[RMDB]
RNA sequence: GGGAACGACUCGAGUAGAGUCGAAAAGGGCGCGGACUCAUCCCGCGCCGGGUCGGUCUCCUCCCGCAAGAUCACCCGGGUGGAAGCGAGCAGGUGAGCCUCGAUAUCGGCCACCUCGAGAAUUAUCGCACUAAAUUACUUUCGAGUAAUUUAGUGCAAAAGAAACAACAACAACAAC
Reactivity to 2A3 in 0.01 (KOAc 150mM, MgCl2 10mM, bicine 150mM(pH8.5), 24C), signal-to-noise 8, nucleotides 027 to 126: g080g000g000c020g010c010g050g060a090c040u040c140a130u140c030c000c000g000c010g000c000c000g000g000g000u040c030g010g010u000c010u020c030c010u040c020c010c000g030c100a090a060g020a150u110c040a070c020c010c010g010g000g000u070g010g030a100a060g060c040g020a020g020c060a030g040g040u040g050a050g010c010c010u070c060g100a080u070a110u240c030g020g000c010c000a010c010c010u010c010g070a080g030a050a070u250u150a130u210c080
Reactivity to DMS in 0.01 (KOAc 150mM, MgCl2 10mM, bicine 150mM(pH8.5), 24C), signal-to-noise 4, nucleotides 027 to 126: g020g000g010c000g010c000g000g000a140c110u050c200a140u030c110c000c000g020c010g000c030c000g010g000g000u010c050g000g020u010c010u000c030c040u020c010c010c020g030c150a170a070g000a050u000c100a070c020c070c020g000g000g060u000g000g010a050a070g020c070g010a070g000c100a020g000g000u010g010a120g020c090c000u010c170g010a130u050a090u030c100g000g000c010c010a010c010c000u000c060g020a120g000a170a100u050u020a100u030c130
Description
An RNA of 177 nucleotides, treated with 2A3 and DMS and read out base by base. For 2A3 the reverse transcriptase was SuperScript II with manganese. The data come from the RNA Mapping Database (RMDB), library OK1LIB. Conditions: 150 mM KOAc, 10 mM MgCl2 and 150 mM bicine (pH 8.5), 24 C.